RNA sequence: GGGAACGACUCGAGUAGAGUCGAAAAGAUAUGGACCCACUAAGUACCUACCAGCGUUGAAAUCGGAAACGAUGGAGCUGAGUAGGGAACUGUGGGUCCUAAGUCAAAACCUCCGUUCGCGGAGGAACAUAUCGUUUUUCUUCGGAAAAACGAUAUGAAAAGAAACAACAACAACAAC
Reactivity to 2A3 in 0.01 (KOAc 150mM, MgCl2 10mM, bicine 150mM(pH8.5), 24C), signal-to-noise 2, nucleotides 027 to 126: g020a010u060a020u160g000g000a010c000c010c000a010c000u020a020a000g000u010a010c000c000u000a000c000c000a000g010c010g300u300u070g000a040a020a010u010c010g000g050a060a060a040c010g000a010u010g010g040a010g000c000u000g170a010g060u000a000g000g000g000a000a000c030u010g000u010g000g010g000u000c000c000u000a020a010g000u000c000a000a010a010a070c000c000u000c020c000g010u010u040c270g000c010g100g000a010g000g010a000a000
Reactivity to DMS in 0.01 (KOAc 150mM, MgCl2 10mM, bicine 150mM(pH8.5), 24C), signal-to-noise 5, nucleotides 027 to 126: g010a040u000a300u000g000g000a020c000c000c000a010c000u000a020a050g000u000a150c000c010u010a000c010c000a010g010c000g010u010u010g000a090a100a030u010c010g000g020a120a110a150c010g020a020u000g000g010a100g000c000u000g000a130g010u000a000g000g000g000a060a030c200u000g000u000g010g000g020u000c000c000u000a000a040g000u010c040a090a040a110a140c010c000u000c000c000g010u000u020c230g020c020g000g000a010g010g000a020a070

Overview: Structure probing data (2A3 and DMS) for a 177-nucleotide construct. The 2A3 profile rests on 7,776 reads. 2A3 adducts were read by reverse transcription with SuperScript II with manganese. The reactions ran in a buffer of 150 mM KOAc, 10 mM MgCl2 and 150 mM bicine (pH 8.5), at 24 C. The DMS profile rests on 5,534 reads. For DMS the reverse transcriptase was MarathonRT. DMS (dimethyl sulfate) methylates the pairing face of unpaired adenines and cytosines.